[RMDB]
RNA sequence: GGGAACGACUCGAGUAGAGUCGAAAAGGUGCAAGGUUCGCCUUGCACCAAAAAAGCGUACUACUAUGAGGGCGCCUGGGCCGAGUCCCAAAUAGGAUAUCCCAGGAACUACGCUGUAGUAGUAUCGCAAAAACGCCUCAACUUCGGUUGAGGCGAAGACAACUAUGAGGUUCGCCUCAUAGUUGUCAAAAGAAACAACAACAACAAC
Reactivity to 2A3 in 0.01 (KOAc 150mM, MgCl2 10mM, bicine 150mM(pH8.5), 24C), signal-to-noise 1, nucleotides 027 to 156: g000g000u000g000c010a000a010g020g010u090u090c060g050c000c000u000u000g000c000a000c040c040a010a010a010a000a000a010g020c030g000u000a000c000u000a000c000u000a000u060g040a250g090g090g000c000g090c000c000u020g000g000g010c090c040g200a180g110u090c020c020c070a170a220a130u300a060g000g000a010u010a040u000c000c000c000a000g010g000a070a080c070u090a050c080g010c010u040g010u000a040g000u000a010g000u000a040u130c050g000c000a090a000a000a000a000c000g000c000c000u010c000a000a000c010u090u160c300g160g000u000u010g000a000g000g010c000g000a000a000